This 177-nucleotide RNA was probed chemically with DMS. The RNA was probed in 150 mM KOAc, 10 mM MgCl2 and 150 mM bicine (pH 8.5) at 24 C. DMS adducts were read by reverse transcription with MarathonRT. The DMS profile rests on 723 reads. Reactivities are given for positions 27 through 126.
RNA sequence: GGGAACGACUCGAGUAGAGUCGAAAAUUAAAGGAGGAGGAGAAUUCCUGCGCGCGCUCGGUCCUCCCACGCGCGGCGCGCGCUGGAAUUCGCGCGCGGAGGAUGAUUAAUAGAUAGCGCGCAAAAAGAUGUACCACAUGUUCGCAUGUGGUACAUCAAAAGAAACAACAACAACAAC
Reactivity to DMS in 0.01 (KOAc 150mM, MgCl2 10mM, bicine 150mM(pH8.5), 24C), signal-to-noise 1, nucleotides 027 to 126: u010u020a120a120a090g000g000a040g010g050a050g010g010a100g020a020a030u000u000c000c000u000g000c050g000c000g030c010g000c020u010c030g020g010u020c110c090u010c020c040c030a060c210g000c140g010c150g020g000c050g030c000g020c000g020c010u000g000g010a030a000u000u000c000g030c030g020c000g050c090g000g030a120g030g010a080u000g000a130u010u020a060a180u010a090g000a050u010a120g040c010g010c000g030c010a050a030a050a100a030